[RMDB]
RNA sequence: GGGAACGACUCGAGUAGAGUCGAAAAGUGCAGACGUUCGCGUCUGCACAAAAAAGAUAUGGAUAAUCUGGGAGCAACAGCCUGCCGUCGGAAACGACGGUCAGGACAUGCUCCGGAUUAUCCUAAGUCAAAAAAGGUGACACUUCGGUGUCACCAACUAACACCAACGGUUCGCCGUUGGUGUUAGAAAAGAAACAACAACAACAAC
Reactivity to 2A3 in 0.01 (KOAc 150mM, MgCl2 10mM, bicine 150mM(pH8.5), 24C), signal-to-noise 1, nucleotides 027 to 156: g010u000g020c000a030g010a000c000g030u030u110c300g030c000g100u000c000u010g000c000a000c010a010a000a000a000a000a000g000a000u020a000u040g000g000a000u010a010a000u000c010u110g210g090g030a010g040c080a050a100c060a120g030c010c000u000g000c000c000g000u000c010g030g000a020a050a030c000g000a000c010g000g070u020c020a000g000g020a000c000a090u190g010c000u020c000c000g010g000a000u000u000a000u000c000c010u000a000a000g010u000c020a000a020a060a060a050a060g000g010u010g010a000c010a000c020u070u190c300g080g000u010g010u000c000a000c000c010a000a000
Chemical mapping of a 207-nucleotide RNA with 2A3.
Source: RMDB library RNAMAK, as collected in RNAgym.
Conditions: 150 mM KOAc, 10 mM MgCl2 and 150 mM bicine (pH 8.5), 24 C.